[RMDB]
RNA sequence: GGGAACGACUCGAGUAGAGUCGAAAACACUGUCGCGCGCGCCGACGCGAUCAAAGAGGAGCUAAUGGCGCGCGAUGAGAUCGCCACUGCGGCCGCGGCGGCGUGGAAGACACUGAAGCGGUUGGUGCCAGGCUGGACGUUUCGACGUCCAGCCUGGAAAAGAAACAACAACAACAAC
Reactivity to 2A3 in 0.01 (KOAc 150mM, MgCl2 10mM, bicine 150mM(pH8.5), 24C), signal-to-noise 1, nucleotides 027 to 126: c110a000c030u050g000u020c000g020c000g000c000g000c000g000c000c010g000a050c170g000c030g050a060u120c030a080a220a040g140a140g090g110a180g010c060u020a100a120u300g000g000c000g000c000g000c000g000a020u100g000a000g070a070u150c040g000c020c020a050c060u220g000c060g000g000c000c000g050c050g030g000c030g000g000c000g010u020g040g100a050a060g200a010c060a000c120u100g030a090a050g060c060g000g030u010u000g050g060u090g000